[RMDB]
RNA sequence: GGGAACGACUCGAGUAGAGUCGAAAAAUGAGGGGAAUCGUCGCCUGCUAAUUCGACUGGUCACGAAAAACAAGAGAGGAGGCAAGGUGGUGCUCAUAGACGAGAUCGAGAAUCGAGGGGCCCCAGAAAUAUACUAGUCGUUCGCGACUAGUAUAUUAAAAGAAACAACAACAACAAC
Reactivity to 2A3 in 0.01 (KOAc 150mM, MgCl2 10mM, bicine 150mM(pH8.5), 24C), signal-to-noise 2, nucleotides 027 to 126: a010u060g010a050g000g030g030g070a020a090u090c020g020u020c020g020c010c010u000g020c030u030a010a090u080u020c020g050a050c090u030g000g030u150c110a080c160g100a090a100a030a030a010c060a040a020g020a000g000a010g070g010a000g000g060c030a030a060g000g010u040g000g030u100g040c000u010c030a050u060a040g040a030c050g000a010g020a070u020c020g010a040g050a270a120u060c020g000a090g040g020g050g020c010c030c010c050a000g110a000
Reactivity to DMS in 0.01 (KOAc 150mM, MgCl2 10mM, bicine 150mM(pH8.5), 24C), signal-to-noise 3, nucleotides 027 to 126: a060u000g000a070g000g010g030g020a120a100u020c060g010u010c060g040c000c000u000g000c040u000a050a300u020u000c020g000a200c080u000g010g020u010c120a100c120g020a060a100a110a090a050c070a050a040g000a300g000a060g000g010a220g000g010c050a050a040g020g010u010g000g030u000g000c050u000c060a050u010a080g000a120c060g000a090g000a070u000c060g000a120g000a110a160u000c040g000a130g000g000g000g000c100c010c000c050a080g020a060